[RMDB]
An RNA of 177 nucleotides, treated with DMS and read out base by base. The reactions ran in a buffer of 150 mM KOAc, 10 mM MgCl2 and 150 mM bicine (pH 8.5), at 24 C.
RNA sequence: GGGAACGACUCGAGUAGAGUCGAAAAGGAUGGGAAGAGUAUAUCCUAUGGGAAUCCCUGGGUGCCUCUCGUGUCCAGCCCACUCCCGGUCCGACUAAAGGGGGACUCCGGGAUUCCUUGCAUGCUGCGUUUCAGAAUUGUUCGCAAUUCUGAAACGAAAAGAAACAACAACAACAAC
Reactivity to DMS in 0.01 (KOAc 150mM, MgCl2 10mM, bicine 150mM(pH8.5), 24C), signal-to-noise 2, nucleotides 027 to 126: g010g010a050u000g010g010g010a080a090g000a130g030u010a080u010a050u010c020c020u010a140u000g020g000g000a050a020u000c030c000c010u000g000g000g000u000g010c000c010u000c010u020c080g010u000g010u010c010c170a200g000c000c020c050a130c120u000c060c070c060g000g010u020c080c300g010a060c040u010a050a080a020g000g010g000g000g000a050c000u010c000c070g000g000g000a020u000u000c000c010u010u000g010c140a030u010g010c110u000g000

For DMS, 1,345 sequencing reads were counted. Values are in units of 0.01, from 0 to 300, in steps of 10. For DMS the reverse transcriptase was MarathonRT.